[RMDB]
RNA sequence: GGGAACGACUCGAGUAGAGUCGAAAAAAUUGGGUUAAAACGGUGUGGGACGAUCCCGUAACAUCCGUCCUAACGGCGACAGACUGCACGGCCCUGCCUCUUAGGUGUGUUCAAUGAACAGUCGUUCUGGCCCCUAAGGCGUUCGCGCCUUAGGGAAGGCAUUCUACAUGUUCGCAUGUAGAAUGCCAAAAGAAACAACAACAACAAC
Reactivity to 2A3 in 0.01 (KOAc 150mM, MgCl2 10mM, bicine 150mM(pH8.5), 24C), signal-to-noise 1, nucleotides 027 to 156: a000a060u180u120g010g000g040u110u050a090a030a000a050c060g020g020u030g000u050g080g020g030a000c030g020a080u100c000c020c060g020u050a030a030c030a010u120c030c080g000u100c000c040u150a190a000c010g060g000c010g050a040c040a050g120a050c000u030g000c020a000c000g030g020c000c010c000u040g100c010c040u110c020u090u200a040g000g000u090g000u000g020u180u030c160a170a170u210g010a050a020c020a030g000u000c000g000u010u000c010u060g130g000c000c000c000c000u000a000a000g000g030c000g010u020u070c160g020c000g000c030c000u000u000a000g000g000g010a000a000